[RMDB]
RNA sequence: GGGAACGACUCGAGUAGAGUCGAAAAAGUGAAUCCGGCGGCCUGAUUUUGACAGUUGGACGGUGGCCAUGGAGGUUGGCAUCCGCUAAGAAACGUGUUGCAACGUACCUACCGAAUUGGGCGGCGGAGAAAAUGGAAGGGAUUGAAUUGCAUUCCGCUACUGACGUUUGUUCGCAAACGUCAGUAGAAAAGAAACAACAACAACAAC
Reactivity to 2A3 in 0.01 (KOAc 150mM, MgCl2 10mM, bicine 150mM(pH8.5), 24C), signal-to-noise 1, nucleotides 027 to 156: a010g090u080g010a020a010u040c010c020g150g000c000g100g160c050c000u000g050a020u000u060u120u170g150a110c040a060g010u100u050g050g000a060c020g010g030u070g100g000c010c000a000u090g070g060a100g050g050u020u030g030g020c010a030u050c030c040g020c100u030a010a130g050a090a200a000c020g010u020g090u180u180g020c080a040a010c010g010u130a250c000c010u040a060c000c010g000a020a000u000u020g000g000g020c000g030g020c010g030g030a020g050a020a060a000a020u090g080g010a030a040g050g000g000a020u060u040g080a180a150u180u180g000c010a000u040u030c030c000g000